[RMDB]
The record gives the reactivity of an RNA of 207 nucleotides to 2A3.
Reactivities are rounded to 0.1 and cut off at 0 and 3.
The 2A3 profile rests on 955 reads.
RNA sequence: GGGAACGACUCGAGUAGAGUCGAAAACCUAUCCAAAAUGAGAUCCCAUCUUGCACACUGUGCUAAUUUGAGAUUCUCAUGCCUCCUACUUGGAGAGAUCUGGAGUAGAAGUCAGGGCAUCUGACUCAAUACAUUCGUCAGUUCGCUGACGAAUGAAGCGAUGUAAUCCCUUCGGGGAUUACAUCGCAAAAGAAACAACAACAACAAC
Reactivity to 2A3 in 0.01 (KOAc 150mM, MgCl2 10mM, bicine 150mM(pH8.5), 24C), signal-to-noise 2, nucleotides 027 to 156: c000c000u020a100u000c040c010a000a160a050a000u020g000a000g000a010u010c000c000c000a000u000c010u020u060g000c020a020c050a110c210u300g000u030g010c080u110a030a100u010u000u010g030a050g010a060u240u190c000u000c000a010u010g000c000c000u040c000c000u150a300c100u200u240g000g000a020g000a000g000a100u020c100u170g000g000a010g010u150a010g040a160a000g000u000c010a010g020g050g300c100a200u080c050u020g020a000c020u020c050a050a090u110a150c000a000u010u000c000g000u000c000a000g010u010u110c190g020c140u000g000a000c000g020a000a000u020g010a090a020
The RNA was probed in 150 mM KOAc, 10 mM MgCl2 and 150 mM bicine (pH 8.5) at 24 C.